[RMDB]
This 177-nucleotide RNA was probed chemically with DMS and 2A3. The reactions ran in a buffer of 150 mM KOAc, 10 mM MgCl2 and 150 mM bicine (pH 8.5), at 24 C.
RNA sequence: GGGAACGACUCGAGUAGAGUCGAAAAAUGGCCGUUACGCUAAUUCAGUAAGCCUGGAAUUUUGUCUGAUCUUGAGGAAAAGGGGAAGCGUUAAAAACAGUUAUCAAUAUAGAAUGUAUAAAUUGUACCCUCAUUAUCACUUCGGUGAUAAUGAGGGAAAAGAAACAACAACAACAAC
Reactivity to DMS in 0.01 (KOAc 150mM, MgCl2 10mM, bicine 150mM(pH8.5), 24C), signal-to-noise 2, nucleotides 027 to 126: a090u000g000g000c000c000g050u000u000a050c100g000c150u000a040a140u020u020c020a060g020u010a100a160g060c080c040u000g020g000a110a090u000u000u020u000g000u050c070u050g020a170u020c030u000u020g000a040g000g000a000a060a120a100g010g000g000g000a110a070g030c080g000u000u080a010a030a010a060a100c060a030g010u000u030a060u000c040a110a040u030a150u000a080g060a180a060u030g010u010a080u000a060a090a020u000u000g030u020a160
Reactivity to 2A3 in 0.01 (KOAc 150mM, MgCl2 10mM, bicine 150mM(pH8.5), 24C), signal-to-noise 2, nucleotides 027 to 126: a000u050g050g000c000c000g020u060u050a000c020g000c050u050a100a100u150u040c000a030g040u070a090a000g040c020c000u010g040g130a140a100u020u000u100u140g060u120c020u070g010a160u040c000u100u120g060a050g000g040a060a060a000a040g070g000g000g000a090a040g000c000g030u050u070a000a180a000a000a000c000a020g000u010u060a160u080c030a100a000u130a030u040a220g090a170a120u080g020u040a040u070a090a080a080u080u100g000u070a050
2A3 adducts were read by reverse transcription with SuperScript II with manganese.